This 177-nucleotide RNA was probed chemically with DMS and 2A3. Values cover nucleotides 27 to 126. The RNA was probed in 150 mM KOAc, 10 mM MgCl2 and 150 mM bicine (pH 8.5) at 24 C. For DMS the reverse transcriptase was MarathonRT. The DMS profile rests on 1,243 reads.

RNA sequence: GGGAACGACUCGAGUAGAGUCGAAAAGGUCGUCUUUUCGAAGACGACCACUGUCGUUCCCAAAACUUAUCGAAACAUGUCGAAAGACAUGCUGAAACAGAAUUGGUGUGUGUUUCGACACACACAAUGCCCACUAUCUAUUCGUAGAUAGUGGGCAAAAAGAAACAACAACAACAAC
Reactivity to DMS in 0.01 (KOAc 150mM, MgCl2 10mM, bicine 150mM(pH8.5), 24C), signal-to-noise 2, nucleotides 027 to 126: g010g010u000c040g010u000c000u000u000u000u020c070g020a030a000g020a000c030g010a000c000c000a000c110u000g000u010c000g010u010u000c000c000c000a030a000a060a040c210u030u000a100u010c070g000a220a150a070c010a010u020g010u000c000g000a170a130a130g010a010c000a000u000g000c010u000g020a080a040a060c250a060g000a080a120u000u010g010g020u000g000u000g000u020g000u000u000u000c170g010a060c000a000c000a060c010a010c010a040a070
Reactivity to 2A3 in 0.01 (KOAc 150mM, MgCl2 10mM, bicine 150mM(pH8.5), 24C), signal-to-noise 1, nucleotides 027 to 126: g000g010u000c000g000u000c000u050u030u010u070c210g090a020a000g000a000c000g000a000c000c000a000c010u020g000u070c000g000u040u000c000c010c000a020a040a020a010c040u060u050a060u160c040g060a050a020a070c020a010u000g000u030c010g060a090a050a060g010a000c000a000u000g000c000u070g040a090a070a030c110a010g230a150a160u180u200g030g030u010g050u000g010u000g000u000u020u100c190g040a000c000a000c000a000c030a010c030a000a000